[RMDB]
RNA sequence: GGGAACGACUCGAGUAGAGUCGAAAAGCUGCUCUUCCCCGGGCUGCACGAGCAAGCGGCGAGCCACGCGUCCUCCAACGUGGUCAACGGCCAGAUGCGGCUGGGCUUCUCGGGGGACAUGUACGGAGGGGAUGCUAUGGUUCGCCAUAGCAUUCCCAAAAGAAACAACAACAACAAC
Reactivity to DMS in 0.01 (KOAc 150mM, MgCl2 10mM, bicine 150mM(pH8.5), 24C), signal-to-noise 3, nucleotides 027 to 126: g010c080u010g000c030u000c040u000u000c010c010c000c140g000g000g010c070u000g020c030a060c020g020a080g010c090a050a070g040c100g000g000c000g010a120g000c000c020a050c050g010c060g000u020c020c000u030c020c010a140a170c170g000u020g000g000u000c070a090a150c060g010g020c020c010a100g030a200u040g000c100g000g010c000u010g000g000g000c000u000u000c020u000c300g000g020g000g040g010a020c070a030u020g020u020a080c050g000g000a300
Reactivity to 2A3 in 0.01 (KOAc 150mM, MgCl2 10mM, bicine 150mM(pH8.5), 24C), signal-to-noise 8, nucleotides 027 to 126: g030c020u060g010c010u020c030u060u070c010c000c000c000g030g010g000c020u030g010c040a070c140g100a080g040c050a110a050g030c020g020g000c020g020a020g010c010c000a010c010g030c020g050u060c010c020u030c010c010a030a040c050g000u010g020g010u020c040a140a090c040g120g010c010c010a060g030a170u270g090c040g030g000c000u020g020g020g000c000u040u000c020u030c040g010g010g000g000g010a010c020a070u130g030u040a070c040g040g050a050